[RMDB]
RNA sequence: GGGAACGACUCGAGUAGAGUCGAAAAAAUCCUACAAGGCGGUCAAAGUUGAAGGCCUGCGGAUUGGCUACCCCAAGAACUUCUGGGAAGACAUUGGCGAAGAGACCACAGGAGCGUUUGAUGCAGCACUAGCAUCCAUGUUCGCAUGGAUGCUAGUAAAAGAAACAACAACAACAAC
Reactivity to DMS in 0.01 (KOAc 150mM, MgCl2 10mM, bicine 150mM(pH8.5), 24C), signal-to-noise 2, nucleotides 027 to 126: a040a030u000c010c000u020a170c150a160a100g010g000c030g030g020u000c020a030a150a180g020u010u000g010a070a150g010g010c030c020u000g000c300g000g000a060u010u000g000g020c140u000a150c180c030c000c080a060a040g010a080a080c070u000u000c030u020g030g010g000a080a060g000a110c080a100u000u000g020g010c080g020a090a140g010a170g000a070c050c010a040c040a040g000g020a050g030c060g000u010u000u000g000a080u010g000c080a050g000c140
Source information:
The data come from the RNA Mapping Database (RMDB), library OK2TRN. Chemical mapping of a 177-nucleotide RNA with DMS. The reactions ran in a buffer of 150 mM KOAc, 10 mM MgCl2 and 150 mM bicine (pH 8.5), at 24 C. In probing experiments dimethyl sulfate is read out at A N1 and C N3, which are open when not base-paired. For DMS the reverse transcriptase was MarathonRT.